[RMDB]
This 177-nucleotide RNA was probed chemically with 2A3 and DMS. Values cover nucleotides 27 to 126. The RNA was probed in 150 mM KOAc, 10 mM MgCl2 and 150 mM bicine (pH 8.5) at 24 C. Source: RMDB libraries RFM100 and RFMREP, as collected in RNAgym.
RNA sequence: GGGAACGACUCGAGUAGAGUCGAAAACGGUUCCGCUUGCGAGCAGGCUUUCGGUACGAAUAGGGGCAGGCACCCAUCGUCAACACACCCAGCGAAGGUGUGGAACCGUUACGGAUCUUAGAGAAGACCUAAUUGCGUCAUUCGUGACGCAAUUAGGAAAAGAAACAACAACAACAAC
Reactivity to 2A3 in 0.01 (KOAc 150mM, MgCl2 10mM, bicine 150mM(pH8.5), 24C), signal-to-noise 6, nucleotides 027 to 126: c000g010g010u030u000c020c000g010c030u020u140g120c040g030a050g030c020a020g070g020c000u040u060u150c120g060g040u130a030c010g020a100a060u130a250g000g010g010g000c050a070g120g010c120a140c000c000c010a000u010c000g030u020c030a070a040c020a010c000a010c040c000c000a020g060c030g070a070a030g010g000u040g040u070g040g000a000a010c000c000g000u010u010a000c010g000g020a030u040c030u040u080a060g020a020g020a200a020g020a040
Reactivity to DMS in 0.01 (KOAc 150mM, MgCl2 10mM, bicine 150mM(pH8.5), 24C), signal-to-noise 3, nucleotides 027 to 126: c000g020g000u000u000c020c040g030c010u000u000g000c100g030a180g010c080a120g000g000c110u000u030u020c150g000g000u000a020c060g010a050a100u020a120g000g000g010g000c030a080g000g000c110a090c020c010c030a050u010c030g010u020c090a120a120c100a060c110a070c070c000c040a090g000c060g000a090a120g000g000u000g000u030g010g010a010a010c010c000g010u000u000a100c120g010g010a040u000c010u000u030a090g010a100g000a130a110g000a170